[RMDB]
RNA sequence: GGGAACGACUCGAGUAGAGUCGAAAACAAACAAACAAAAAGCGGCCACAGCAGACAAGUAAACGACAAGGCCGCUAACAGAUUCUGGUGAAUCUGCGAAGUCUGCUGUAGAGCGAAAAAGCUCAUCCUGCUGCAGCUAGUUCGCUAGCUGCAGCAGAAAAGAAACAACAACAACAAC
Reactivity to 2A3 in 0.01 (KOAc 150mM, MgCl2 10mM, bicine 150mM(pH8.5), 24C), signal-to-noise 1, nucleotides 027 to 126: c000a000a150a010c060a010a170a000c100a020a030a150a000a000g000c000g040g000c030c000a060c010a060g000c000a020g000a000c000a110a060g180u180a190a130a060c000g050a070c230a190a030g000g000c010c010g000c000u000a000a000c030a000g000a000u000u090c000u300g120g000u220g130a030a000u000c000u020g010c010g090a100a000g000u000c000u000g000c000u050g000u020a080g000a000g000c020g120a270a000a080a000a000g010c030u000c000a010u220c000